[RMDB]
RNA sequence: GGGAACGACUCGAGUAGAGUCGAAAAAGCCGCACUGUACGCAGUGCGGCAACGGUACCGGUUCCCGUUGGUGCGCAAACUCCGCGCCCAUCGACCCGGCGACCAGAGGUGCAUACGUGCACCUCAAUAGCGUACUGUGUUUCGACACAGUACGCUAAAAAGAAACAACAACAACAAC
Reactivity to 2A3 in 0.01 (KOAc 150mM, MgCl2 10mM, bicine 150mM(pH8.5), 24C), signal-to-noise 3, nucleotides 027 to 126: a000g040c000c000g000c000a000c000u020g030u060a010c240g010c120a000g000u000g010c000g000g000c000a000a000c010g010g010u010a010c000c010g060g010u060u100c040c000c000g020u010u000g020g020u220g000c020g000c030a040a090a300c180u180c190c120g020c000g010c000c000c000a000u020c020g050a060c000c010c000g030g000c100g080a010c000c010a000g000a000g000g010u010g000c010a010u010a060c290g090u020g000c010a000c000c000u000c000a000a020
Reactivity to DMS in 0.01 (KOAc 150mM, MgCl2 10mM, bicine 150mM(pH8.5), 24C), signal-to-noise 1, nucleotides 027 to 126: a120g000c000c000g000c020a000c000u000g000u000a000c190g070c060a000g070u020g000c030g000g000c000a000a000c080g010g030u000a050c040c000g010g020u030u000c100c070c000g050u050u000g000g000u070g000c000g020c030a120a130a080c300u070c200c070g000c000g020c030c000c000a000u000c000g010a010c190c000c100g000g000c110g000a020c000c000a260g000a010g000g040u010g000c000a000u020a070c160g020u030g000c030a000c000c000u000c000a030a120
Conditions: 150 mM KOAc, 10 mM MgCl2 and 150 mM bicine (pH 8.5), 24 C. This 177-nucleotide RNA was probed chemically with 2A3 and DMS. For 2A3, 2,846 sequencing reads were counted. The DMS profile rests on 1,820 reads. DMS adducts were read by reverse transcription with MarathonRT. Source: RMDB library RFM100, as collected in RNAgym.